[RMDB]
RNA sequence: GGGAACGACUCGAGUAGAGUCGAAAACAUUUUUUCCAUUCCAUAUAUCCAGUCUCUACAACAGAACAUUUGUUCAUGUAGUUGACCAGGAGGGGUGGUUGGUUCAUACACGACGUCAUUUUUGGAGGUUGUGUAUGAUUUUCCUUAUAUGUGGAACCACUACAUGACACUUCGGUGUCAUGUAGUGAAAAGAAACAACAACAACAAC
Reactivity to 2A3 in 0.01 (KOAc 150mM, MgCl2 10mM, bicine 150mM(pH8.5), 24C), signal-to-noise 2, nucleotides 027 to 156: c010a090u040u050u060u030u050u050c000c030a010u060u000c000c000a020u070a000u030a030u030c000c000a000g000u000c000u000c010u000a010c000a060a020c010a150g020a030a010c040a170u200u250u300g070u000u000c000a000u000g000u000a000g030u030u020g000a000c000c000a040g030g000a050g000g000g000g000u020g010g000u020u050g040g010u010u000c000a000u000a010c000a000c000g000a000c000g150u010c000a050u010u090u100u160u300g150g020a030g000g000u000u000g030u000g000u000a000u010g000a000u010u030u020u010c000c020u110u100a140u020a050u150g060u030g040g020a000a010c030
Reactivity to DMS in 0.01 (KOAc 150mM, MgCl2 10mM, bicine 150mM(pH8.5), 24C), signal-to-noise 1, nucleotides 027 to 156: c050a030u000u000u000u000u000u000c000c020a200u000u000c070c000a080u000a140u000a180u000c000c010a080g000u000c000u010c000u010a000c010a060a180c260a300g000a010a040c010a300u000u000u000g000u000u000c020a280u000g010u000a020g000u010u000g030a030c000c030a060g030g010a050g010g000g030g040u010g010g030u000u000g000g000u000u000c020a020u000a020c000a020c000g010a030c010g020u030c010a200u000u000u000u000u000g030g020a040g000g070u000u010g010u000g000u000a000u000g010a010u000u000u010u000c020c040u000u010a090u010a140u000g010u000g000g000a040a140c290
The record gives the reactivity of an RNA of 207 nucleotides to 2A3 and DMS. It was measured as part of the RMDB library OK3TST. 2A3 adducts were read by reverse transcription with SuperScript II with manganese. Reactivities are rounded to 0.1 and cut off at 0 and 3. For 2A3, 873 sequencing reads were counted. The RNA was probed in 150 mM KOAc, 10 mM MgCl2 and 150 mM bicine (pH 8.5) at 24 C. Values cover nucleotides 27 to 156.